The record gives the reactivity of an RNA of 207 nucleotides to 2A3 and DMS. In probing experiments dimethyl sulfate is read out at A N1 and C N3, which are open when not base-paired. For 2A3 the reverse transcriptase was SuperScript II with manganese. The reactions ran in a buffer of 150 mM KOAc, 10 mM MgCl2 and 150 mM bicine (pH 8.5), at 24 C. The data come from the RNA Mapping Database (RMDB), library OK3TST. For DMS the reverse transcriptase was MarathonRT.
RNA sequence: GGGAACGACUCGAGUAGAGUCGAAAACGGAUAGUUCUCCGGGCCUUCGGCGAGGGCGCGCUGGAAGUCGUCCCAGCGUUCAUCGACCCAGGCUGCCCGGUCGUCGAAGUACACCUUGUCGCAUCCGAGGGAGUUGGCGACGUGUACCUUGAGCCAGCUACUCCAAUUAUUUCGAUAAUUGGAGUAGAAAAGAAACAACAACAACAAC
Reactivity to 2A3 in 0.01 (KOAc 150mM, MgCl2 10mM, bicine 150mM(pH8.5), 24C), signal-to-noise 7, nucleotides 027 to 156: c030g030g010a060u060a070g060u100u060c030u000c040c010g050g010g000c010c000u020u030c030g000g000c000g000a030g010g030g000c020g000c030g020c020u010g010g030a220a110g070u090c040g040u060c030c040c020a050g060c040g110u140u130c050a090u100c070g090a160c010c010c000a010g040g000c090u130g010c010c000c010g020g050u050c020g010u000c000g010a010a000g000u010a010c000a000c020c060u070u120g010u020c010g020c020a040u030c030c040g080a200g050g120g010a130g070u200u220g120g020c000g000a010c020g000u010g010u010a060c030c060u070u150g010a020g020c000c010a020g000
Reactivity to DMS in 0.01 (KOAc 150mM, MgCl2 10mM, bicine 150mM(pH8.5), 24C), signal-to-noise 2, nucleotides 027 to 156: c020g010g000a070u000a090g010u000u000c050u050c010c010g020g020g020c020c020u000u000c000g020g010c020g020a150g010g020g020c070g020c010g000c030u000g010g000a060a080g030u000c100g010u010c030c010c020a120g000c040g020u000u000c060a080u000c020g010a070c000c020c020a150g010g020c020u000g020c000c010c000g030g070u000c040g060u000c010g000a040a050g010u010a040c030a000c020c120u000u000g000u000c030g000c080a120u010c030c030g000a110g030g000g010a260g020u000u010g040g020c030g010a040c040g030u000g000u000a040c010c020u000u010g010a140g000c000c000a160g000